[RMDB]
RNA sequence: GGGAACGACUCGAGUAGAGUCGAAAAAUAUAUAUUGCAUGGCUUUCGGACAACCAUGACGGUAACUCCAUACCUUUGGUAUGUUGUCAUGGCUGCAUGACGUACAUCGCAGGGGUAAUGAGUCGACACGAUGUUUUACCUUCGGGUAAAACAUCGUAAAAGAAACAACAACAACAAC
Reactivity to DMS in 0.01 (KOAc 150mM, MgCl2 10mM, bicine 150mM(pH8.5), 24C), signal-to-noise 2, nucleotides 027 to 126: a050u010a100u030a090u020a090u000u020g010c060a010u000g000g000c120u000u000u000c110g030g020a160c050a130a140c050c020a000u020g010a040c010g020g010u020a050a110c110u010c030c100a170u000a020c000c020u000u000u000g000g030u000a030u000g010u000u000g000u000c000a010u010g010g020c210u010g020c040a020u000g000a020c030g020u040a040c010a020u000c120g010c000a020g010g020g000g000u000a060a080u000g000a010g010u010c070g020a110c250
Reactivity to 2A3 in 0.01 (KOAc 150mM, MgCl2 10mM, bicine 150mM(pH8.5), 24C), signal-to-noise 2, nucleotides 027 to 126: a000u220a020u030a020u000a020u020u070g020c030a030u010g030g010c020u030u100u200c110g130g020a060c030a020a040c010c000a000u030g050a070c010g030g000u040a050a040c020u000c060c010a000u010a070c000c000u000u040u010g040g050u070a030u030g020u010u040g000u000c000a010u000g080g080c130u210g090c020a000u040g000a020c000g020u060a000c010a000u000c070g000c150a020g070g030g000g000u070a140a000u020g020a010g020u050c050g000a040c020